An RNA of 207 nucleotides, treated with 2A3 and read out base by base. Values cover nucleotides 27 to 156.
RNA sequence: GGGAACGACUCGAGUAGAGUCGAAAAGUAAAGAUCGCUCUUUUACUCGGCAUGAUACCACCGUUAUCGGGUAAACAGAGUAGUUGCAAAUGACAACAAUGCUCAGGGUUAUGCUCUCGCUGCCUAAAAAAUCGUUUAACGUUCGCGUUAAACGAAAUCCGUCCUUAAGCUUCGGCUUAAGGACGGAAAAAGAAACAACAACAACAAC
Reactivity to 2A3 in 0.01 (KOAc 150mM, MgCl2 10mM, bicine 150mM(pH8.5), 24C), signal-to-noise 1, nucleotides 027 to 156: g010u020a060a000a000g090a120u060c090g030c020u010c000u000u000u020u000a020c000u000c000g080g020c060a050u080g000a040u170a210c120c040a070c060c020g100u120u080a130u020c000g060g000g020u050a030a030a000c020a020g000a000g050u020a000g040u000u020g000c020a020a140a140u210g020a090c000a000a000c000a020a030u090g100c030u020c110a100g000g000g010u030u140a040u130g000c000u020c050u030c140g070c140u040g060c000c000u140a120a150a000a070a000a000u020c000g000u030u000u000a000a000c000g020u010u040c280g020c000g160u000u000a000a000a000c000g000a000a000a000
2A3 adducts were read by reverse transcription with SuperScript II with manganese.